The data come from the RNA Mapping Database (RMDB), library OK2TRN. The record gives the reactivity of an RNA of 177 nucleotides to 2A3 and DMS.

RNA sequence: GGGAACGACUCGAGUAGAGUCGAAAAGAUCAAUUAUGAUUGCAAUGUAAUAUGUCAAGGCAGACAUAUCUAGCUGUCGCCUUAGCUAGAGAUAGCCGAUUUAUUCCUUUCAUAAGAACGGCAAGAACACCAUAUGGUCGUUCGCGACCAUAUGGUGAAAAGAAACAACAACAACAAC
Reactivity to 2A3 in 0.01 (KOAc 150mM, MgCl2 10mM, bicine 150mM(pH8.5), 24C), signal-to-noise 2, nucleotides 027 to 126: g040a040u130c050a020a120u130u150a080u180g050a030u030u050g050c030a040a060u090g020u180a080a040u070a060u060g070u050c030a050a060g100g010c000a010g020a060c010a050u080a060u010c030u020a020g040c000u000g060u100c060g080c090c020u000u060a000g020c000u000a000g000a010g030a050u100a040g010c020c020g000a000u040u000u060a060u030u030c030c000u060u040u020c050a070u050a120a030g020a120a030c010g040g040c050a010a050g100a040a000
Reactivity to DMS in 0.01 (KOAc 150mM, MgCl2 10mM, bicine 150mM(pH8.5), 24C), signal-to-noise 2, nucleotides 027 to 126: g010a120u010c040a080a170u000u000a030u000g010a080u010u000g010c190a100a070u020g010u010a070a060u000a040u000g000u010c050a070a090g050g000c050a160g000a030c110a040u020a080u000c060u020a030g010c060u000g000u000c110g010c120c070u000u000a020g000c020u000a010g000a060g000a110u000a100g010c010c020g000a070u000u000u000a100u000u010c060c020u000u000u000c070a040u000a030a070g010a050a080c110g000g000c040a100a070g010a040a160
The 2A3 profile rests on 2,020 reads.